[RMDB]
RNA sequence: GGGAACGACUCGAGUAGAGUCGAAAAUGUGGGGACUUCGGUCCCCACAAUAACGAGGAGCGGUUGGCCUCGUAAAAAGCCGCAAUCUACGAAAGUAGAAAACACACGUCGAGUUCGCUCGACGUAAACUAAUCUGACAGUUCGCUGUCAGAUUAGUAAAAGAAACAACAACAACAAC
Reactivity to 2A3 in 0.01 (KOAc 150mM, MgCl2 10mM, bicine 150mM(pH8.5), 24C), signal-to-noise 2, nucleotides 027 to 126: u110g010u010g020g000g000g010a010c020u040u050c230g080g020u010c000c000c000c000a010c010a000a010u020a000a010c000g000a000g030g010a030g020c000g020g040u010u060g090g140c000c000u000c000g020u010a000a010a000a000a010g000c010c010g000c030a020a120u030c010u010a000c000g010a070a060a000g000u020a000g000a040a060a020a000c120a010c000a010c010g000u010c000g010a000g020u060u060c180g040c080u010c000g000a000c000g000u000a000a000
Reactivity to DMS in 0.01 (KOAc 150mM, MgCl2 10mM, bicine 150mM(pH8.5), 24C), signal-to-noise 4, nucleotides 027 to 126: u010g020u000g040g010g010g020a020c000u000u020c170g010g010u000c000c000c000c000a000c010a000a030u000a070a300c010g010a010g000g000a100g010c000g000g010u010u000g010g000c000c010u010c000g000u000a020a040a020a010a030g010c010c000g090c040a300a110u000c010u000a000c000g000a110a100a170g010u000a000g000a030a050a090a070c200a100c180a030c010g030u000c000g010a020g000u000u010c220g010c010u000c000g000a020c000g010u000a010a030